[RMDB]
RNA sequence: GGGAACGACUCGAGUAGAGUCGAAAAAGUGACGUCGACGACCGGGACUACUACACGCUCGCGUACGCCGAACGACGGGGGCUCGAGCGCGACCUCGCGACGGCGGAGUUCGAUGUCGAGGGCACCGUAUGGUGACCGAGUUCGCUCGGUCACCAUAAAAAGAAACAACAACAACAAC
Reactivity to 2A3 in 0.01 (KOAc 150mM, MgCl2 10mM, bicine 150mM(pH8.5), 24C), signal-to-noise 8, nucleotides 027 to 126: a000g120u060g020a020c020g030u010c010g010a040c020g020a020c010c030g050g030g010a050c040u140a040c020u090a060c190a040c170g030c010u020c020g050c050g050u070a100c000g000c020c010g090a280a120c030g270a130c010g010g000g000g040g000c030u050c140g100a120g120c120g020c030g080a060c000c000u010c000g000c010g010a030c010g000g010c000g020g000a070g020u100u040c010g000a040u030g010u020c010g000a070g040g020g030c060a020c100c020g020
Reactivity to DMS in 0.01 (KOAc 150mM, MgCl2 10mM, bicine 150mM(pH8.5), 24C), signal-to-noise 9, nucleotides 027 to 126: a100g010u010g010a040c020g030u000c000g010a040c040g000a120c070c020g030g010g020a100c070u010a110c160u010a110c180a090c220g000c040u000c020g010c120g010u000a150c020g010c010c010g000a130a080c060g000a120c030g010g010g000g010g020c070u000c060g000a140g020c120g010c030g000a090c020c010u000c010g020c010g010a170c050g000g010c010g000g000a100g010u000u000c010g000a040u000g010u000c010g000a100g010g000g000c090a100c040c040g010